[RMDB]
RNA sequence: GGGAACGACUCGAGUAGAGUCGAAAAUCACCAUGCUGGCCAGACUGGUCUCGAACUCCUGACCUCAAGUGAUCCGCCUGCCUUGGCAUCCCAAAGUGCUGAGAUUACUAGUGUGAGCCACCAUGCCCCAGGUCAUAUCUUUCGAGAUAUGACCUGGAAAAGAAACAACAACAACAAC
Reactivity to 2A3 in 0.01 (KOAc 150mM, MgCl2 10mM, bicine 150mM(pH8.5), 24C), signal-to-noise 2, nucleotides 027 to 126: u050c010a010c050c000a020u040g000c020u030g000g000c000c020a040g040a150c040u040g000g040u030c040u040c050g070a070a050c020u020c020c010u060g050a090c030c030u060c070a100a040g040u020g060a040u000c000c050g000c010c030u040g000c020c010u010u040g010g000c010a090u070c020c020c000a030a100a000g090u090g040c060u050g010a030g000a130u060u120a100c030u050a060g020u030g030u030g090a030g030c000c010a010c010c000a040u040g000c000c010
Reactivity to DMS in 0.01 (KOAc 150mM, MgCl2 10mM, bicine 150mM(pH8.5), 24C), signal-to-noise 3, nucleotides 027 to 126: u010c070a100c170c020a100u010g010c160u010g010g010c040c010a070g010a080c050u000g000g000u000c040u010c050g000a080a080c080u000c040c010u000g000a060c050c040u000c060a050a060g030u000g010a040u000c030c020g030c060c030u000g000c040c020u010u000g000g010c070a100u000c030c040c020a070a060a080g020u000g020c020u010g010a050g000a030u000u000a050c050u000a060g000u010g030u000g000a120g000c010c030a060c060c020a060u000g010c040c040
This 177-nucleotide RNA was probed chemically with 2A3 and DMS. 2A3 adducts were read by reverse transcription with SuperScript II with manganese. Source: RMDB library OK2TRN, as collected in RNAgym. Values are in units of 0.01, from 0 to 300, in steps of 10. The reactions ran in a buffer of 150 mM KOAc, 10 mM MgCl2 and 150 mM bicine (pH 8.5), at 24 C.